[RMDB]
RNA sequence: GGGAACGACUCGAGUAGAGUCGAAAAUCAGACUGACUUUGUGACUGUCCUAGUUUCCGGCUGUUGAGUCAGCUCAGGCAGUUCUUGGGACUUCUGUGAGUCUCUGGCUCCCCGUCUCUCAAUGGGGGGCCACUGGUAAUUUCGAUUACCAGUGGCCAAAAGAAACAACAACAACAAC
Reactivity to 2A3 in 0.01 (KOAc 150mM, MgCl2 10mM, bicine 150mM(pH8.5), 24C), signal-to-noise 1, nucleotides 027 to 126: u040c010a000g060a040c040u080g020a000c010u070u080u090g090u090g060a010c050u060g080u120c000c000u020a070g030u060u180u070c070c040g020g030c000u010g000u150u150g120a230g250u070c030a040g000c010u020c100a030g020g000c040a030g000u060u080c030u120u160g000g000g000a030c000u000u000c060u110g130u050g090a050g010u000c000u000c040u070g010g000c010u020c010c010c010c000g030u050c080u010c010u050c080a020a160u080g000g080g000g000
Reactivity to DMS in 0.01 (KOAc 150mM, MgCl2 10mM, bicine 150mM(pH8.5), 24C), signal-to-noise 2, nucleotides 027 to 126: u000c000a050g000a060c140u000g010a240c020u000u000u000g010u010g010a040c100u000g010u010c010c040u000a090g000u000u010u010c080c060g000g010c000u010g000u000u000g010a140g010u000c030a040g020c040u000c100a070g010g000c110a050g000u000u000c030u020u010g030g010g020a150c080u000u010c060u010g010u000g000a040g010u000c010u000c040u010g010g000c010u000c000c000c000c020g010u010c100u020c120u000c110a110a070u010g000g000g000g000